[RMDB]
RNA sequence: GGGAACGACUCGAGUAGAGUCGAAAAGAGCCGGUCGUCGACGGCGUCGAGCAGGUCCUCGUCUCGUCGUCGACGAACUCGAGGACCUCCUACCACAAGCAAGAUCCGCACAAUGCGGGGGAACCGAUACGAGGAUGCUAUUCGUAGCAUCCUCGUAAAAAGAAACAACAACAACAAC
Reactivity to 2A3 in 0.01 (KOAc 150mM, MgCl2 10mM, bicine 150mM(pH8.5), 24C), signal-to-noise 1, nucleotides 027 to 126: g000a020g060c020c010g000g050u090c020g000u010c010g030a030c020g010g040c020g040u030c010g000a010g000c120a080g100g100u130c000c000u000c000g040u010c000u000c020g030u000c000g080u070c080g000a000c010g010a010a010c000u000c000g000a050g000g060a050c020c010u000c000c010u040a060c040c010a060c030a160a010g150c040a060a010g090a170u010c000c000g060c020a050c090a200a290u300g030c010g000g010g010g010g010a020a000c060c040g020a040
Reactivity to DMS in 0.01 (KOAc 150mM, MgCl2 10mM, bicine 150mM(pH8.5), 24C), signal-to-noise 2, nucleotides 027 to 126: g010a140g020c060c010g010g000u000c010g010u000c010g010a090c000g040g000c000g000u000c020g000a050g000c260a100g010g000u000c100c020u000c030g020u010c060u000c000g030u000c030g040u000c120g010a000c010g010a010a030c050u000c030g000a080g000g010a100c110c000u000c020c020u000a140c080c010a060c160a090a090g020c130a170a100g030a150u010c010c000g000c060a110c120a100a110u010g010c040g040g000g000g000g020a110a080c090c060g030a230